[RMDB]
Chemical mapping of a 177-nucleotide RNA with 2A3 and DMS. DMS adducts were read by reverse transcription with MarathonRT. Source: RMDB library M2PK90, as collected in RNAgym.
RNA sequence: GGGAACGACUCGAGUAGAGUCGAAAAAAUUUGAGCCUCGCACACACACAGACUAAGUCUGCUGCUGACAGAGCCUAAACCGCUCUGUCAGUGUGCGAGAUAUCGUUCUUAAUGUGAGCAGAAGAAAGGUGCAUAUGAUGUUCGCAUCAUAUGCACCAAAAGAAACAACAACAACAAC
Reactivity to 2A3 in 0.01 (KOAc 150mM, MgCl2 10mM, bicine 150mM(pH8.5), 24C), signal-to-noise 1, nucleotides 027 to 126: a000a000u130u060u080g030a030g000c000c000u000c010g000c000a010c000a000c000a000c000a000c010a010g030a000c040u240a250a010g030u030c010u020g040c030u030g010c000u000g000a000c000a010g000a010g000c010c000u060a050a030a030c010c020g010c000u000c000u000g000u020c000a010g000u000g000u010g000c020g010a000g000a000u060a010u000c050g020u080u000c000u030u130a110a070u120g020u050g090a030g000c070a010g040a160a000g110a050a150a020
Reactivity to DMS in 0.01 (KOAc 150mM, MgCl2 10mM, bicine 150mM(pH8.5), 24C), signal-to-noise 2, nucleotides 027 to 126: a070a040u020u010u010g010a020g030c150c000u000c010g000c000a040c020a050c130a280c120a080c050a010g010a050c010u000a130a150g030u000c000u010g000c040u000g020c260u010g000a020c000a000g020a000g030c000c030u010a080a070a100c300c300g000c040u000c010u010g000u000c000a010g010u000g000u010g000c010g040a010g000a050u000a060u000c060g000u010u000c010u000u000a060a110u010g000u010g010a060g020c020a090g000a130a060g010a070a070a080